[RMDB]
RNA sequence: GGGAACGACUCGAGUAGAGUCGAAAAUGGAGGCGGCUCCAGGUCGUGCCUUUUGGAAGAAACUCCUAAAGGACUUGACUGGAUGCCCGCCUGACCUGCCCGAGCUUUCCACCGCUAGUCGAGCGGACUAAUGGCAAGCUCUCCGACCCUUAGAAUUCUUUCAUAUUUACUUCGGUAAAUAUGAAAGAAAAGAAACAACAACAACAAC
Reactivity to 2A3 in 0.01 (KOAc 150mM, MgCl2 10mM, bicine 150mM(pH8.5), 24C), signal-to-noise 4, nucleotides 027 to 156: u070g010g010a000g000g000c000g000g000c000u000c000c010a010g010g150u140c050g090u250g010c000c000u000u000u010u030g020g000a020a010g020a040a040a020c010u000c020c000u010a010a010a000g030g020a050c040u300u300g010a010c000u000g000g000a010u020g020c030c000c000g000c000c000u000g010a010c000c000u000g000c000c000c000g000a000g000c000u010u030u000c000c000a010c010c000g010c030u070a100g200u220c110g120a020g020c010g030g030a020c090u220a140a100u040g010g000c030a000a000g000c000u000c010u000c020c060g220a200c030c000c050u120u190a090g060a300a140u180u040